This 177-nucleotide RNA was probed chemically with 2A3. Conditions: 150 mM KOAc, 10 mM MgCl2 and 150 mM bicine (pH 8.5), 24 C.

[RMDB]
RNA sequence: GGGAACGACUCGAGUAGAGUCGAAAACUAAUUACGUAGAGGAUAUGUCUCAAUUUGUUCUGCAUUGAUGCCGCAGCGGGGACGGGGGCCAGGCCAUGGCUGCUCAGAUACAUGGGCCCAUGAAAUUACACGAUACCCAUUUCGAUGGGUAUCGUGUAAAAGAAACAACAACAACAAC
Reactivity to 2A3 in 0.01 (KOAc 150mM, MgCl2 10mM, bicine 150mM(pH8.5), 24C), signal-to-noise 2, nucleotides 027 to 126: c000u050a000a140u300u100a060c100g090u100a040g000a050g100g050a040u040a070u230g100u070c000u000c020a060a300u030u010u140g050u050u100c010u020g000c050a000u040u010g050a000u200g080c020c000g080c090a040g040c110g060g000g000g090a000c060g040g000g000g020g000c000c000a010g000g030c010c000a040u030g000g020c030u060g010c070u010c000a000g000a020u290a090c120a070u160g000g000g000c000c000c000a000u000g000a000a090a000u080u010